[RMDB]
RNA sequence: GGGAACGACUCGAGUAGAGUCGAAAAGAUAUGGACCUCUGAUUCCGAAGAACUACGUAACAUCGAAAUCUCCAGUCGGAAACGACUGGAGAUUUCGUGGUAGGGAGGAAGAUGAGGUCCUAAGUCACUUCAAUACAUCCUUCGGGAUGUAUUGAAGAAAAGAAACAACAACAACAAC
Reactivity to DMS in 0.01 (KOAc 150mM, MgCl2 10mM, bicine 150mM(pH8.5), 24C), signal-to-noise 2, nucleotides 027 to 126: g030a000u000a120u000g010g000a000c000c010u000c000u000g010a300u000u000c000c000g020a100a210g010a160a250c000u000a000c000g030u020a190a150c270a100u030c000g010a020a010a010u000c010u000c010c000a020g020u000c000g000g000a040a020a050c000g000a010c010u000g010g010a000g000a000u000u000u000c010g000u000g000g030u000a000g000g010g010a040g010g010a050a000g000a300u000g000a010g020g030u000c000c000u000a000a040g000u010c010a280
This 177-nucleotide RNA was probed chemically with DMS. For DMS, 1,753 sequencing reads were counted. For DMS the reverse transcriptase was MarathonRT.